RNA sequence: GGGAACGACUCGAGUAGAGUCGAAAAACGGUCAUAUACGUAUGACCGAAUGAGCAUAACAGGGCCACCCCAAAGCGUUCACAUUGUGGCCCCAGUCAGAUUCUGGUAAAUCUGCGAGUUCUGCUAAAUUAGGUAACUCUCUUCGGAGAGUUACCAAGGGAUUGAUAUAGUUCGCUAUAUCAAUCCCAAAAGAAACAACAACAACAAC
Reactivity to DMS in 0.01 (KOAc 150mM, MgCl2 10mM, bicine 150mM(pH8.5), 24C), signal-to-noise 1, nucleotides 027 to 156: a110c010g020g010u000c010a030u010a050u010a070c300g020u000a000u000g000a000c010c010g010a030a000u000g000a180g040c020a060u000a060a060c040a050g000g030g000c000c010a020c010c040c000c010a050a150a180g010c050g040u000u000c090a080c060a180u040u010g010u000g000g020c000c010c000c000a020g000u010c020a030g000a080u000u000c030u000g010g010u000a040a020a010u000c020u000g000c050g000a190g060u000u000c140u000g040c000u010a060a160a170u010u010a150g040g030u010a010a020c000u010c010u000c010u000u000c300g040g000a010g030a020g030u010u000a000c000c000a020a060
Reactivity to 2A3 in 0.01 (KOAc 150mM, MgCl2 10mM, bicine 150mM(pH8.5), 24C), signal-to-noise 3, nucleotides 027 to 156: a000c000g000g010u000c010a000u020a000u020a030c160g090u050a040u030g000a010c010c000g030a010a080u130g020a020g020c000a030u000a020a020c000a020g000g000g000c000c010a010c010c000c020c010a080a130a060g110c110g140u220u160c080a100c060a170u080u140g000u000g000g030c000c000c000c000a000g070u110c000a000g010a000u080u000c020u300g050g020u070a040a050a010u000c010u010g000c010g020a060g020u050u010c060u000g010c000u030a070a200a170u150u110a080g000g010u000a000a000c000u010c000u000c000u100u050c120g040g000a000g000a010g010u010u000a000c000c000a000a000
The record gives the reactivity of an RNA of 207 nucleotides to DMS and 2A3. The reactions ran in a buffer of 150 mM KOAc, 10 mM MgCl2 and 150 mM bicine (pH 8.5), at 24 C. 2A3 adducts were read by reverse transcription with SuperScript II with manganese.